[RMDB]
RNA sequence: GGGAACGACUCGAGUAGAGUCGAAAAGAUAUGGAUGCCUGUAGGGAGCUCAGUCGGAAACGACGAGCAUCGAUCUAUUGGCAUCCUAAGUCGGGCUCCACCGCAUGGUUCGCCAUGCGGUGGAGAAGCUACUAUUCCUGUUCGCAGGAAUAGUAGCAAAAGAAACAACAACAACAAC
Reactivity to DMS in 0.01 (KOAc 150mM, MgCl2 10mM, bicine 150mM(pH8.5), 24C), signal-to-noise 2, nucleotides 027 to 126: g010a020u000a210u030g000g000a020u000g000c000c000u000g000u000a010g010g010g000a030g030c000u000c000a110g030u000c000g000g000a070a030a070c000g030a010c000g010a010g020c000a130u000c070g010a060u000c000u000a000u000u000g000g000c010a000u000c000c000u000a010a050g020u000c010g020g010g010c010u000c010c000a020c030c000g000c000a010u000g000g010u000u020c230g010c000c010a020u000g000c000g000g030u000g010g010a000g000a020a030
Reactivity to 2A3 in 0.01 (KOAc 150mM, MgCl2 10mM, bicine 150mM(pH8.5), 24C), signal-to-noise 2, nucleotides 027 to 126: g020a010u030a010u080g000g010a000u000g010c010c010u020g020u020a040g120g300g020a010g000c020u040c110a140g020u010c020g000g000a060a020a030c010g010a010c010g010a010g020c010a150u200c020g090a160u040c010u000a000u030u010g000g000c000a000u000c000c000u000a010a010g000u000c000g020g090g000c000u000c000c020a010c030c010g050c010a000u030g080g040u080u130c300g020c100c020a010u030g010c050g020g010u000g000g000a000g000a000a000